[RMDB]
The record gives the reactivity of an RNA of 207 nucleotides to 2A3 and DMS. 2A3 adducts were read by reverse transcription with SuperScript II with manganese. 2A3 is a SHAPE reagent: it acylates the 2'-hydroxyl of flexible nucleotides of all four kinds. The DMS profile rests on 3,734 reads. Source: RMDB library OK3TST, as collected in RNAgym.
RNA sequence: GGGAACGACUCGAGUAGAGUCGAAAAAACUGAUUUUGUCAUGACUGGUAAGGCCAGCUUCAGCGACUUCGCCAGAAGCGUGAUUAGUGACAUUACCAGUAUGCUAAUCAAAAUGGCGCUGUUCAAUGCAAUGUCUGCUGCGUUCGGCGGUGGCGGCCCCUAAUGGGAAAUUCGUUUCCCAUUAGGGAAAAGAAACAACAACAACAAC
Reactivity to 2A3 in 0.01 (KOAc 150mM, MgCl2 10mM, bicine 150mM(pH8.5), 24C), signal-to-noise 5, nucleotides 027 to 156: a010a020c090u060g020a060u070u050u100u040g190u280c030a020u030g190a080c000u000g000g000u020a020a020g060g030c040c030a020g010c050u010u040c030a010g030c010g230a300c100u130u060c100g050c070c030a060g030a030a010g000c030g020u050g070a080u050u140a030g060u030g040a030c050a120u040u030a020c010c000a010g010u010a040u020g000c000u010a010a010u010c000a000a030a030a120u120g040g000c050g000c050u050g050u110u140c110a080a050u060g010c020a030a070u110g070u090c070u090g040c010u010g020c040g070u040u070c100g180g260c030g080g000u020g010g020c000g030g020c000
Reactivity to DMS in 0.01 (KOAc 150mM, MgCl2 10mM, bicine 150mM(pH8.5), 24C), signal-to-noise 1, nucleotides 027 to 156: a060a000c040u000g010a030u000u000u010u010g010u000c030a050u010g020a090c020u000g000g030u000a020a040g010g030c020c010a110g020c020u000u000c060a180g020c000g010a170c110u010u000c010g030c120c140a150g010a040a040g000c060g040u000g000a080u010u010a050g000u000g010a060c020a050u000u000a070c000c020a060g010u010a040u010g020c030u000a040a050u000c030a030a100a070a110u010g010g010c070g020c010u000g000u010u020c030a060a110u010g000c020a030a080u000g030u000c070u010g060c020u020g050c020g030u000u010c060g020g000c070g000g050u010g000g000c030g030g030c060
Conditions: 150 mM KOAc, 10 mM MgCl2 and 150 mM bicine (pH 8.5), 24 C.